[RMDB]
RNA sequence: GGGAACGACUCGAGUAGAGUCGAAAAGGUUUUUGCCAUCAGCGAGGUAUAGAGUUCCUACGUUCAUUAUAAACUCGUAGGAACUUCAUACCGUGCUCUUGGAAGACCAAAAAACAACCAAGUGAAUGCAAAAAUCCCAAAAAGUAUGGCGAAAACAAUUAAAUGCACUCUUCGGAGUGCAUUUAAUAAAAGAAACAACAACAACAAC
Reactivity to 2A3 in 0.01 (KOAc 150mM, MgCl2 10mM, bicine 150mM(pH8.5), 24C), signal-to-noise 1, nucleotides 027 to 156: g140g040u020u020u000u010u030g000c000c000a000u000c040a000g100c010g070a060g000g000u020a010u060a120g010a000g020u000u000c000c010u000a000c000g000u000u120c040a180u030u300a060u220a250a040a060c070u010c060g010u000a000g000g000a000a000c010u040u000c000a000u000a000c020c000g000u020g000c060u020c000u010u030g000g030a060a000g070a080c160c030a140a090a000a140a000a000c020a010a010c000c000a010a000g040u040g090a040a050u050g010c070a040a040a000a170a090u220c040c000c060a170a070a010a000a000g120u130a060u080g000g000c030g020a000a000a020a020c000a010
Reactivity to DMS in 0.01 (KOAc 150mM, MgCl2 10mM, bicine 150mM(pH8.5), 24C), signal-to-noise 1, nucleotides 027 to 156: g000g010u000u000u010u010u020g030c000c010a010u000c000a050g050c040g030a020g010g020u000a010u000a060g000a010g000u010u000c000c010u010a010c010g030u010u000c020a120u000u010a230u020a150a020a060c010u000c010g020u000a020g020g020a010a010c000u010u000c010a000u010a010c010c000g000u010g000c000u000c020u010u000g000g000a110a120g000a120c080c030a010a030a090a080a060a070c030a030a190c090c010a120a120g020u010g000a120a030u020g000c060a010a120a110a100a080u000c040c000c000a080a050a190a150a180g020u000a050u000g010g000c010g000a060a080a100a050c090a100